[RMDB]
RNA sequence: GGGAACGACUCGAGUAGAGUCGAAAAGAAUUGGUAUGUAAGCUACUUCUUCCAGUAGCUGCGUCAUAACAUCAAGGUUAUGCAUACUGAGCCGAAGCUCAGCUUCGGUCCUCCAAGGAAGGCCAAAUACAGCUCAGCCCGUUCGCGGGCUGAGCAACUACCUCCUAGUCUUCGGACUAGGAGGUAGAAAAGAAACAACAACAACAAC
Reactivity to 2A3 in 0.01 (KOAc 150mM, MgCl2 10mM, bicine 150mM(pH8.5), 24C), signal-to-noise 2, nucleotides 027 to 156: g040a010a070u020u020g000g000u000a000u000g000u000a000a000g010c000u010a000c010u040u100c000u020u000c000c000a000g000u000a000g000c000u000g010c010g000u000c000a000u010a010a020c020a070u300c160a120a030g300g010u000u000a000u000g000c010a000u000a010c010u010g000a010g010c000c000g000a000a000g000c050u080c300a040g010c010u030u000c000g020g000u000c000c020u080c040c020a060a040g000g000a010a000g000g010c030c040a010a110a030u220a100c070a040g010c000u000c000a000g010c000c060c000g070u140u170c230g010c020g070g000g030c000u010g000a000g000c000a000a000
An RNA of 207 nucleotides, treated with 2A3 and read out base by base.
The data come from the RNA Mapping Database (RMDB), library M2RFPK.
Values cover nucleotides 27 to 156.
The reactions ran in a buffer of 150 mM KOAc, 10 mM MgCl2 and 150 mM bicine (pH 8.5), at 24 C.
For 2A3, 1,272 sequencing reads were counted.